[RMDB]
RNA sequence: GGGAACGACUCGAGUAGAGUCGAAAAACCAUCCCAGAUGGCGGUCCGACCGGACACGGUAUUGGUCGUGUGAUUGAAGAGGCUGUCGAUGCCCAAGAAACGUACCUCAAGCAUCUCAAAGGUGCGGUACCGCGCAGCCUCGAGGGCAUUACAGUAAUAUGCAUCGUAGUUUCGACUACGAUGCAUAAAAAGAAACAACAACAACAAC
Reactivity to DMS in 0.01 (KOAc 150mM, MgCl2 10mM, bicine 150mM(pH8.5), 24C), signal-to-noise 2, nucleotides 027 to 156: a040c000c060a130u010c000c020c020a210g010a140u010g010g030c060g020g010u000c070c010g020a100c030c060g000g000a060c090a050c030g020g000u000a090u000u000g030g040u000c050g020u000g000u000g010a140u010u000g000a090a240g000a160g010g020c010u000g010u100c060g080a080u010g020c000c000c030a050a190g020a050a050a080c040g000u000a020c040c000u000c020a170a170g030c000a040u000c040u020c080a110a080a080g010g070u000g000c000g070g010u000a040c070c020g030c050g010c060a120g010c070c000u000c040g000a160g000g000g030c050a080u000u000a070c040a090g020u000a040a220
Reactivity to 2A3 in 0.01 (KOAc 150mM, MgCl2 10mM, bicine 150mM(pH8.5), 24C), signal-to-noise 2, nucleotides 027 to 156: a000c010c000a060u050c000c030c000a030g120a130u100g000g040c080g030g020u090c010c010g050a080c040c070g030g030a090c110a060c110g050g030u080a080u140u120g020g080u020c020g000u010g040u050g020a200u100u090g020a130a120g010a050g020g050c000u000g060u000c000g050a040u170g000c000c000c040a040a050g030a060a090a010c080g000u040a020c020c030u090c090a120a130g000c000a050u000c040u090c250a240a160a040g000g030u000g000c000g000g010u000a000c000c090g020c010g000c110a040g020c000c000u000c000g000a020g040g000g000c000a000u040u040a040c020a020g050u050a000a190

Record summary
Source: RMDB library OK3TST, as collected in RNAgym. An RNA of 207 nucleotides, treated with DMS and 2A3 and read out base by base. For DMS the reverse transcriptase was MarathonRT. Conditions: 150 mM KOAc, 10 mM MgCl2 and 150 mM bicine (pH 8.5), 24 C.